[RMDB]
RNA sequence: GGGAACGACUCGAGUAGAGUCGAAAAGUCAUUAAGAAGUAACUGGAAAUUUAUAGGAACAGAUUUGGAGCUGUUUGGAAUAGCAGAUUUUGUUAUUUUUAAGGUUCCAGUAAAAACAAUAAUCCGAUAGUUGCAAGUAAUUCGUUACUUGCAACUAAAAAGAAACAACAACAACAAC
Reactivity to 2A3 in 0.01 (KOAc 150mM, MgCl2 10mM, bicine 150mM(pH8.5), 24C), signal-to-noise 3, nucleotides 027 to 126: g090u030c020a050u070u210a110a070g080a050a000g070u060a130a020c070u010g020g040a130a030a020u090u130u040a150u140a140g080g020a050a030c000a000g070a050u140u050u210g070g070a090g000c000u020g030u080u030u000g010g010a040a010u040a000g000c030a050g160a300u080u120u150u100g000u020u010a020u010u040u000u030u110a020a070g040g010u000u000c000c000a000g000u020a000a010a030a040a000c060a080a100u160a040a090u030c000c010g050a000
Reactivity to DMS in 0.01 (KOAc 150mM, MgCl2 10mM, bicine 150mM(pH8.5), 24C), signal-to-noise 2, nucleotides 027 to 126: g010u020c050a090u040u010a060a130g000a120a080g000u000a110a040c000u000g000g000a010a010a030u020u000u010a040u040a150g010g020a030a020c010a000g000a060u020u030u020g000g020a160g020c020u000g020u020u000u040g000g010a040a020u000a020g020c020a050g010a120u020u060u040u000g010u000u000a040u010u020u000u000u000a010a080g000g000u000u000c000c000a010g000u010a010a030a090a090a050c110a040a080u000a100a090u010c040c030g000a200
Conditions: 150 mM KOAc, 10 mM MgCl2 and 150 mM bicine (pH 8.5), 24 C. The record gives the reactivity of an RNA of 177 nucleotides to 2A3 and DMS. For DMS the reverse transcriptase was MarathonRT. The 2A3 profile rests on 1,565 reads.